[RMDB]
RNA sequence: GGGAACGACUCGAGUAGAGUCGAAAAUGGUAGAUCUUCAAUUUGGAUAUUUGGAGGAGUGAACAUCGUUGUUUUGCUGGAGGGAAGAUCUUGAUGGUGUUUCUUUCCCCAAAAAUUGACUUAGAUAUUAAAAUUUGGUGCUUAUAAGAGAGAGUUACCGGUAGUAUGAGUUCGCUCAUACUACCGGAAAAGAAACAACAACAACAAC
Reactivity to 2A3 in 0.01 (KOAc 150mM, MgCl2 10mM, bicine 150mM(pH8.5), 24C), signal-to-noise 1, nucleotides 027 to 156: u130g030g030u050a060g010a080u020c030u070u060c060a000a170u020u070u130g050g000a040u030a100u130u150u100g000g000a010g020g010a010g030u030g050a010a010c010a040u070c080g030u040u000g000u030u100u060u100g020c010u010g010g070a060g010g010g030a000a010g040a020u000c000u050u100g070a060u100g050g020u000g020u000u020u100c000u000u050u010c000c000c000c020a030a030a030a030a030u030u130g010a000c000u040u160a050g050a100u100a100u170u270a170a080a070a030u000u080u060g030g000u000g090c050u090u100a060u060a170a000g030a030g010a000g090a000g040u180u160a080

Source information:
An RNA of 207 nucleotides, treated with 2A3 and read out base by base. For 2A3, 417 sequencing reads were counted. For 2A3 the reverse transcriptase was SuperScript II with manganese. Source: RMDB library OK3TST, as collected in RNAgym.